Structure probing data (2A3 and DMS) for a 177-nucleotide construct.
RNA sequence: GGGAACGACUCGAGUAGAGUCGAAAAGAUAUGGAUCGUUCCCACCAGCGUUGAAAUCGGAAACGAUGGAGCUGAAGUGGGAGACGAUCCUAAGUCAAACGUUCUUUCGCUUCGGCGAAAGAACGAACGUACGAGAUAUCUUCGGAUAUCUCGUACGAAAAGAAACAACAACAACAAC
Reactivity to 2A3 in 0.01 (KOAc 150mM, MgCl2 10mM, bicine 150mM(pH8.5), 24C), signal-to-noise 3, nucleotides 027 to 126: g020a030u070a030u130g010g010a000u010c010g020u010u020c040c000c000a000c010c000a010g030c000g240u300u050g030a040a030a010u020c010g000g030a020a040a060c010g000a010u030g030g030a030g000c000u010g020a300a030g060u000g000g000g020a200g110a040c010g000a000u000c000c000u020a070a020g040u010c030a150a040a030c010g000u000u000c000u000u010u010c010g000c040u050u110c260g200g000c030g000a010a010a000g000a000a000c000g000a020a010
Reactivity to DMS in 0.01 (KOAc 150mM, MgCl2 10mM, bicine 150mM(pH8.5), 24C), signal-to-noise 3, nucleotides 027 to 126: g010a030u000a300u010g000g000a010u000c000g000u000u000c000c000c000a020c020c020a000g000c010g000u010u020g000a070a100a010u000c010g000g000a110a120a220c000g000a030u000g010g010a120g040c000u000g000a100a100g020u000g000g000g020a030g000a000c000g010a010u000c010c000u000a020a050g010u000c030a090a110a260c010g000u000u010c000u000u000u000c000g030c000u000u010c230g020g000c000g020a000a010a010g010a000a000c000g010a030a040